Notes
The record gives the reactivity of an RNA of 177 nucleotides to DMS and 2A3. Source: RMDB library TTRDES, as collected in RNAgym. The RNA was probed in 150 mM KOAc, 10 mM MgCl2 and 150 mM bicine (pH 8.5) at 24 C.
RNA sequence: GGGAACGACUCGAGUAGAGUCGAAAAGAUAUGGAUGUUCAAGCUAGCUGUCAGUCGGAAACGACUGUUAGCUUGGACCUUGACAUCCUAAGUCAAAUCGUACAUAGGCUUCGGCCUAUGUACGAAAGGAAUCCUUUAACUUCGGUUAAAGGAUUCCAAAAGAAACAACAACAACAAC
Reactivity to DMS in 0.01 (KOAc 150mM, MgCl2 10mM, bicine 150mM(pH8.5), 24C), signal-to-noise 2, nucleotides 027 to 126: g010a030u000a300u000g000g010a020u000g010u030u000c010a000a000g000c060u000a030g030c000u000g000u000c000a000g010u000c000g000g000a070a060a160c010g030a020c000u000g000u000u000a010g020c010u010u010g010g020a090c300c020u000u000g000a030c020a010u000c000c000u020a050a070g010u010c020a150a110a250u000c010g030u010a000c000a010u010a020g010g010c000u000u020c210g040g000c000c000u000a000u000g000u000a000c010g000a020a030a100
Reactivity to 2A3 in 0.01 (KOAc 150mM, MgCl2 10mM, bicine 150mM(pH8.5), 24C), signal-to-noise 2, nucleotides 027 to 126: g030a020u060a040u100g010g020a000u010g040u290u130c010a010a000g010c030u090a010g000c000u030g020u020c000a000g000u000c000g040g000a080a070a040c010g030a020c000u000g000u030u010a000g000c000u020u170g060g030a010c020c000u000u030g010a000c000a010u020c000c020u030a100a000g040u030c050a070a050a180u040c010g020u010a010c000a010u000a010g000g010c010u090u110c300g090g000c000c020u000a000u000g000u000a000c010g010a010a000a000
For DMS the reverse transcriptase was MarathonRT. Values are in units of 0.01, from 0 to 300, in steps of 10. The DMS profile rests on 2,386 reads.